[RMDB]
RNA sequence: GGGAACGACUCGAGUAGAGUCGAAAACUUAAAUGGUUCGCCAUUUAAGAAAAAUCCUAAGUCGAGCGACGAUCCGCAGGCAUCGAUCAUAUCGGAAACGAUAUGGGAGCCUGGGGGAGCUCGAUAUGGAAAAAAGUCCUUGAUUCGUCAAGGACAAUCGGUAGUUUAGUUUCGACUAAACUACCGAAAAAGAAACAACAACAACAAC
Reactivity to 2A3 in 0.01 (KOAc 150mM, MgCl2 10mM, bicine 150mM(pH8.5), 24C), signal-to-noise 1, nucleotides 027 to 156: c000u010u010a010a000a000u020g000g050u050u060c160g080c060c000a000u000u000u000a010a000g020a110a030a000a000a000u020c020c010u050a120a040g050u020c000g010a000g000c010g280a300c000g020a060u000c000c010g220c090a020g050g000c020a160u300c100g090a080u070c010a000u000a000u000c000g050g020a090a030a030c010g000a000u000a000u010g040g000g000a010g000c010c000u010g000g000g000g000g000a000g010c020u010c010g000a010u010a040u060g020g000a030a050a060a130a060a060g160u290c260c000u050u030g050a030u020u110c250g030u000c090a000a000g000g000a010c020a000a070